[RMDB]
RNA sequence: GGGAACGACUCGAGUAGAGUCGAAAACGACAAGUUGCUCAACUCGCUGUUCGCCAAGUCCGUCAAUAUCUAGUGCUGAACGGCUUCCAUAAUGAACGAUUGUCCGGACGAGUUGUGCAUCACAUGUGAGCCCACCUGUGCAGAAGGCUAAGGGUCCCCCAUGGGUCCUUUUCGAAGGACCCAUGGGAAAAGAAACAACAACAACAAC
Reactivity to 2A3 in 0.01 (KOAc 150mM, MgCl2 10mM, bicine 150mM(pH8.5), 24C), signal-to-noise 1, nucleotides 027 to 156: c080g050a020c050a110a080g010u000u010g000c010u000c010a000a010c000u000c040g010c080u060g020u110u070c050g000c100c070a020a000g020u050c050c000g020u040c040a100a040u030a080u210c190u260a080g030u050g150c010u020g040a100a010c040g020g000c030u110u080c020c000a170u120a230a180u210g060a010a020c010g100a090u140u090g100u140c140c070g010g020a140c000g000a000g000u000u000g010u000g020c000a000u040c020a050c010a020u080g020u010g000a020g000c000c000c000a010c040c010u120g030u050g010c040a050g020a130a010g160g000c080u140a020a020g080g020g030u060c020c030
This 207-nucleotide RNA was probed chemically with 2A3. For 2A3 the reverse transcriptase was SuperScript II with manganese. The data come from the RNA Mapping Database (RMDB), library OK3TST. The RNA was probed in 150 mM KOAc, 10 mM MgCl2 and 150 mM bicine (pH 8.5) at 24 C.